[RMDB]
RNA sequence: GGGAACGACUCGAGUAGAGUCGAAAAUUGACCAGACCUGUGUACAAGGCAAGCACUGGAGCUUAUCAGUGUUAAUUCUAUAUAACGUGAUUCUUAAUUGGUUUUGCUCUGCAAGCUUUGCAAAUUAAUCACGAUGCUGAUUCGUCAGCAUCGUGAUAAAAGAAACAACAACAACAAC
Reactivity to 2A3 in 0.01 (KOAc 150mM, MgCl2 10mM, bicine 150mM(pH8.5), 24C), signal-to-noise 2, nucleotides 027 to 126: u210u200g090a110c060c000a100g100a080c030c040u130g000u010g010u110a010c070a070a020g060g080c000a000a040g000c000a000c120u110g060g000a000g060c060u030u040a010u070c010a000g010u000g010u140u060a000a000u090u070c080u050a080u040a090u040a300a090c090g060u090g100a100u030u010c020u160u180a260a200u120u000g030g090u000u000u000u160g060c000u020c000u040g070c000a050a170g020c000u000u040u080g000c070a000a160a050u080u080a010
Reactivity to DMS in 0.01 (KOAc 150mM, MgCl2 10mM, bicine 150mM(pH8.5), 24C), signal-to-noise 1, nucleotides 027 to 126: u000u010g010a090c090c020a140g010a050c270c080u050g000u060g000u000a100c130a000a010g000g010c000a060a200g000c060a050c190u010g000g040a010g000c200u000u050a150u000c020a030g000u000g000u000u030a050a060u000u000c080u000a020u070a060u040a120a120c160g020u040g000a000u000u000c090u000u010a040a010u000u000g030g000u000u000u000u030g000c000u040c040u000g000c130a010a280g060c080u000u020u000g000c080a000a040a130u030u030a110
The record gives the reactivity of an RNA of 177 nucleotides to 2A3 and DMS. For 2A3, 905 sequencing reads were counted. DMS adducts were read by reverse transcription with MarathonRT. For 2A3 the reverse transcriptase was SuperScript II with manganese.